The record gives the reactivity of an RNA of 207 nucleotides to 2A3. The data come from the RNA Mapping Database (RMDB), library M2RFPK. The RNA was probed in 150 mM KOAc, 10 mM MgCl2 and 150 mM bicine (pH 8.5) at 24 C. For 2A3, 444 sequencing reads were counted.

RNA sequence: GGGAACGACUCGAGUAGAGUCGAAAAACCUUAUUUUGAGAACCUGAGGGAUUUGGCCCAUAGAAGCUUCAGCAACCGACUUUAAAUAGCACGGUGCUAAUACCAACGAGCAACUCGAAUGAUAAGUAAAACGUUGACAAGUUCGCUUGUCAACGAACUUCAUCUGGAACUUCGGUUCCAGAUGAAGAAAAGAAACAACAACAACAAC
Reactivity to 2A3 in 0.01 (KOAc 150mM, MgCl2 10mM, bicine 150mM(pH8.5), 24C), signal-to-noise 1, nucleotides 027 to 156: a000c100c000u160u130a230u030u050u090u060g040a070g000a050a020c010c030u150g070a100g020g040g000a050u060u080u280g030g000c100c000c020a010u080a050g120a040a000g020c000u040u100c040a020g000c000a060a100c000c000g050a000c000u090u000u080a060a190a240u110a170g000c000a050c040g030g010u000g000c050u000a000a000u030a020c000c010a050a010c080g000a010g040c030a000a080c010u020c050g020a050a060u020g120a020u020a220a000g060u100a050a120a000a100c010g000u000u000g000a000c000a000a000g000u000u080c210g010c050u000u020g000u000c000a000a000c000g000a000a000